[RMDB]
RNA sequence: GGGAACGACUCGAGUAGAGUCGAAAACCUCUUGACUUGCAGUAAUGAACUUUGUUUCUUGAUUACCAGGAAAUAAAUGAGAUGAAAGAGGGCCUAGCAGGUUGUGGGUUUACUGUGUCAUAACACAAUUGGUUUCAAUAUUCAUGCUGACCUAGAACUAAUACUAAAAUUUCGAUUUUAGUAUUAGAAAAGAAACAACAACAACAAC
Reactivity to DMS in 0.01 (KOAc 150mM, MgCl2 10mM, bicine 150mM(pH8.5), 24C), signal-to-noise 2, nucleotides 027 to 156: c000c030u000c040u010u010g010a270c110u000u000g010c030a130g030u000a100a090u010g010a110a150c110u010u010u000g020u000u000u000c000u010u000g020a300u010u010a120c170c020a050g010g000a040a020a020u010a020a080a050u000g000a170g020a140u000g010a090a070a090g000a100g030g050g010c020c040u000a060g030c090a090g020g010u010u000g020u000g000g010g010u000u010u000a020c050u010g010u000g010u010c060a090u000a050a090c010a020c050a040a140u000u000g010g010u000u010u000c040a080a070u000a120u000u000c030a080u000g010c020u000g000a230c030c010u000a070g010a110a260
Reactivity to 2A3 in 0.01 (KOAc 150mM, MgCl2 10mM, bicine 150mM(pH8.5), 24C), signal-to-noise 4, nucleotides 027 to 156: c000c000u000c030u040u080g030a050c010u060u060g040c040a050g040u170a140a190u110g060a070a080c020u000u020u040g030u010u000u040c020u040u040g130a180u120u170a170c170c020a020g040g010a020a030a030u050a020a070a030u140g030a080g030a060u080g030a060a040a050g040a040g000g000g010c000c020u030a040g010c060a030g030g030u030u040g020u080g050g040g000u030u090u030a020c020u020g020u000g040u040c060a060u070a250a020c060a000c000a090a110u080u050g030g030u010u120u120c020a050a040u060a080u210u080c040a030u090g010c030u030g030a060c000c020u020a030g020a040a030